An RNA of 177 nucleotides, treated with 2A3 and DMS and read out base by base.
The RNA was probed in 150 mM KOAc, 10 mM MgCl2 and 150 mM bicine (pH 8.5) at 24 C.
For 2A3, 2,184 sequencing reads were counted.
[RMDB]
RNA sequence: GGGAACGACUCGAGUAGAGUCGAAAAGAGGUCUCUCUCGAGCUCCUCUGCCUUUCUUCUUGUGGAGAUCCACUUUUCGAGGAUUUCUUCCCUUCCUCCCCUCCGGCCCUUCCUCGACUCGGGUUGGCUACUAAUGUUCGUUCGCGAACAUUAGUAGAAAAGAAACAACAACAACAAC
Reactivity to 2A3 in 0.01 (KOAc 150mM, MgCl2 10mM, bicine 150mM(pH8.5), 24C), signal-to-noise 2, nucleotides 027 to 126: g120a030g020g060u020c010u050c000u000c030u060c080g010a000g020c040u010c010c000u020c020u020g040c000c000u050u100u060c020u090u010c000u060u150g050u080g030g010a060g030a080u040c010c020a040c080u110u100u140u170c070g060a060g010g020a030u040u010u050c020u020u020c030c000c000u020u080c000c000u000c010c020c000c000u000c010c000g020g000c000c000c000u050u070c000c020u030c010g020a010c010u000c020g010g000g010u000u000g020g000
Reactivity to DMS in 0.01 (KOAc 150mM, MgCl2 10mM, bicine 150mM(pH8.5), 24C), signal-to-noise 2, nucleotides 027 to 126: g000a080g000g010u000c020u010c010u000c080u010c100g010a050g000c140u010c020c020u010c050u010g000c030c040u000u010u010c010u000u000c040u000u000g020u000g000g000a080g000a070u000c010c020a080c050u000u000u010u010c120g000a090g000g000a060u000u010u010c050u000u000c020c000c010u010u000c010c020u000c010c010c000c010u010c030c020g010g020c010c020c040u000u010c040c020u000c050g000a050c040u000c040g010g010g010u000u000g010g010